Structure probing data (DMS and 2A3) for a 177-nucleotide construct. Conditions: 150 mM KOAc, 10 mM MgCl2 and 150 mM bicine (pH 8.5), 24 C.
RNA sequence: GGGAACGACUCGAGUAGAGUCGAAAAACGAACACGAUCGCUGGCUGAGUCGCCGCAGCGGUCUGCAACAGCAAUGGGUCAGCGAGCUGCUCGCCGAUACCCCGGUCGACGUUCCGCGGGCCGAGCGACAUUCGUCCUACUUCGGUAGGACGAAUGUAAAAGAAACAACAACAACAAC
Reactivity to DMS in 0.01 (KOAc 150mM, MgCl2 10mM, bicine 150mM(pH8.5), 24C), signal-to-noise 2, nucleotides 027 to 126: a110c090g000a090a080c090a140c130g000a020u000c010g020c010u000g000g010c080u010g010a140g050u000c060g000c040c070g030c050a050g040c020g030g000u020c020u000g000c080a060a070c110a130g000c090a110a090u000g010g000g000u000c030a050g020c010g000a040g020c090u000g000c110u000c010g020c000c000g000a130u020a110c170c060c050c000g010g020u000c000g000a060c050g000u020u000c120c050g020c050g000g000g020c020c030g000a110g000c080g000
Reactivity to 2A3 in 0.01 (KOAc 150mM, MgCl2 10mM, bicine 150mM(pH8.5), 24C), signal-to-noise 1, nucleotides 027 to 126: a000c060g040a090a030c050a020c130g000a010u020c000g000c040u030g070g020c000u070g110a030g170u130c040g060c040c000g020c030a010g020c020g030g000u000c010u030g010c040a140a100c010a050g090c030a040a120u190g120g020g010u050c030a000g000c010g020a000g000c010u030g000c010u020c010g000c000c000g040a060u200a260c000c000c030c020g000g070u150c070g010a060c000g000u000u030c040c000g000c000g030g000g000c020c020g040a010g000c000g020
It was measured as part of the RMDB library OK2TST. For 2A3 the reverse transcriptase was SuperScript II with manganese. Values cover nucleotides 27 to 126.